[RMDB]
An RNA of 177 nucleotides, treated with 2A3 and DMS and read out base by base. Source: RMDB library OK2TST, as collected in RNAgym. Conditions: 150 mM KOAc, 10 mM MgCl2 and 150 mM bicine (pH 8.5), 24 C. For DMS the reverse transcriptase was MarathonRT. Reactivities are given for positions 27 through 126. The DMS profile rests on 1,597 reads.
RNA sequence: GGGAACGACUCGAGUAGAGUCGAAAAGUACCAAAGGAAUGAUCAAUGAAGACGGAGAGAGAGUGACAACAUUCAUGGUCCAUAUUGGGAAUUUUGUUAGACGGUGUGGCAAGGAAUAUUCCGUUGAUGACGUUGUUGAUUUCGAUCAACAACGUCAAAAAGAAACAACAACAACAAC
Reactivity to 2A3 in 0.01 (KOAc 150mM, MgCl2 10mM, bicine 150mM(pH8.5), 24C), signal-to-noise 1, nucleotides 027 to 126: g040u010a040c000c000a030a040a090g110g000a080a050u120g050a070u090c070a020a090u040g010a070a030g120a050c080g050g000a050g000a000g000a000g010a000g080u090g000a040c050a100a030c010a150u090u030c030a000u080g000g000u000c010c000a000u040a030u120u060g020g000g090a060a020u140u100u150u120g120u000u060a010g010a020c000g000g000u020g010u020g050g000c050a030a020g020g010a060a030u080a040u150u060c030c020g020u080u090g060a080
Reactivity to DMS in 0.01 (KOAc 150mM, MgCl2 10mM, bicine 150mM(pH8.5), 24C), signal-to-noise 2, nucleotides 027 to 126: g010u000a130c010c010a100a110a110g020g000a110a040u010g010a090u010c040a100a090u000g010a060a070g000a080c050g000g000a040g030a060g030a120g030a050g030u010g010a060c130a050a100c110a030u020u020c100a030u000g000g020u010c050c060a090u010a040u000u000g010g000g010a050a120u010u000u010u000g000u010u010a090g000a040c060g000g010u010g030u000g010g020c070a040a070g010g000a050a060u000a120u020u000c010c020g010u010u010g010a130